[RMDB]
RNA sequence: GGGAACGACUCGAGUAGAGUCGAAAACUCAAUGUAGGGAAUAACAUUGAAUUGAUACAAAUACCUUUUUCGGUGUAGGGAAAAACACCGAAUUGAUACAAAUACCUUUCUCAAUGAAGGGAAUAACAAAACAGGCAUCGCUUCGGCGAUGCCUGAACACUAGAAGGUCGUUCGCGACCUUCUAGUGAAAAGAAACAACAACAACAAC
Reactivity to 2A3 in 0.01 (KOAc 150mM, MgCl2 10mM, bicine 150mM(pH8.5), 24C), signal-to-noise 2, nucleotides 027 to 156: c010u000c000a000a020u000g030u070a090g030g140g030a140a180u090a130a010c010a000u010u030g010a060a050u070u150g060a100u120a290c120a030a150a030u160a060c000c010u000u010u010u020u030c000g000g040u000g000u010a020g030g010g050a110a180a090a070a000c000a020c010c020g010a000a000u010u010g010a010u050a030c030a010a060a010u130a060c000c000u000u050u070c040u090c170a070a210u240g000a000a000g020g020g070a020a090u110a120a040c050a000a050a000a030c000a000g000g000c000a000u000c000g000c010u050u050c130g050g020c000g000a000u000g010c010c000u000g000a000a000
Background
This 207-nucleotide RNA was probed chemically with 2A3. The RNA was probed in 150 mM KOAc, 10 mM MgCl2 and 150 mM bicine (pH 8.5) at 24 C.